RNA sequence: GGGAACGACUCGAGUAGAGUCGAAAAGAUAUGGACAUAGGAGCUAAUCCGAAUUCGCUUUCGGAAACGAAAGAACUACGAUUCGGAUGCCACUAUGUCCUAAGUCAAAGUGCCCUUCGGGGCACAACCUCGGUUAACUGUUCGCAGUUAACCGAGGAAAAGAAACAACAACAACAAC
Reactivity to DMS in 0.01 (KOAc 150mM, MgCl2 10mM, bicine 150mM(pH8.5), 24C), signal-to-noise 1, nucleotides 027 to 126: g040a030u020a300u000g000g010a020c010a020u000a010g020g020a260g000c020u000a110a070u000c000c010g020a040a060u010u000c040g050c000u000u000u000c000g000g000a090a060a170c030g000a000a010a000g000a100a100c140u020a200c100g000a040u000u000c000g010g000a040u040g000c020c250a280c000u000a000u000g000u020c000c000u000a020a070g030u000c010a070a060a170g000u000g000c000c000c010u000u020c200g040g020g000g020c010a000c010a040a050
Reactivity to 2A3 in 0.01 (KOAc 150mM, MgCl2 10mM, bicine 150mM(pH8.5), 24C), signal-to-noise 1, nucleotides 027 to 126: g020a030u070a000u130g000g000a020c000a010u010a000g000g030a110g050c030u140a190a020u060c010c000g000a000a010u240u140c020g030c060u030u000u000c030g050g000a050a060a090c010g010a040a020a020g020a080a060c190u300a060c240g000a010u000u000c020g000g020a020u010g000c000c010a070c010u010a000u000g000u000c000c010u000a040a000g000u000c000a120a050a100g010u000g000c000c010c000u000u040c260g020g000g000g000c000a000c010a000a000